RNA sequence: GGGAACGACUCGAGUAGAGUCGAAAACAUCGCGACUUCGGUCGCGAUGAAAGUUGUGCUCCCUCACGCAUAACAAAUCCCUAUGAGGGUAGGUGACUGCAAAACGACACGCCUUCGGGCGUGUCAACCAAUGACACUGGUUCGCCAGUGUCAUUGGAAAAGAAACAACAACAACAAC
Reactivity to DMS in 0.01 (KOAc 150mM, MgCl2 10mM, bicine 150mM(pH8.5), 24C), signal-to-noise 2, nucleotides 027 to 126: c000a010u010c000g040c000g020a020c010u000u010c190g020g000u000c000g010c000g020a000u000g010a000a060a110g020u000u010g010u000g000c000u000c080c010c000u000c020a140c170g010c010a020u000a010a020c040a100a060a110u010c020c010c000u000a050u010g000a050g000g000g000u000a020g010g010u010g000a130c040u010g000c100a050a060a110a160c220g000a000c000a000c010g010c010c010u000u000c220g040g000g010c000g020u010g000u000c000a010a080
Reactivity to 2A3 in 0.01 (KOAc 150mM, MgCl2 10mM, bicine 150mM(pH8.5), 24C), signal-to-noise 1, nucleotides 027 to 126: c010a020u020c010g000c000g000a020c000u030u070c190g130g010u010c020g000c010g000a020u000g000a020a010a020g010u000u010g020u010g030c020u100c030c050c000u040c010a020c140g000c000a010u040a090a010c000a020a060a030u040c040c020c020u040a110u150g030a020g040g000g040u070a040g000g140u080g070a090c060u050g020c040a000a060a060a140c120g000a020c000a010c020g020c000c000u050u090c300g040g010g000c010g050u000g000u000c000a000a000
Chemical mapping of a 177-nucleotide RNA with DMS and 2A3. For DMS the reverse transcriptase was MarathonRT.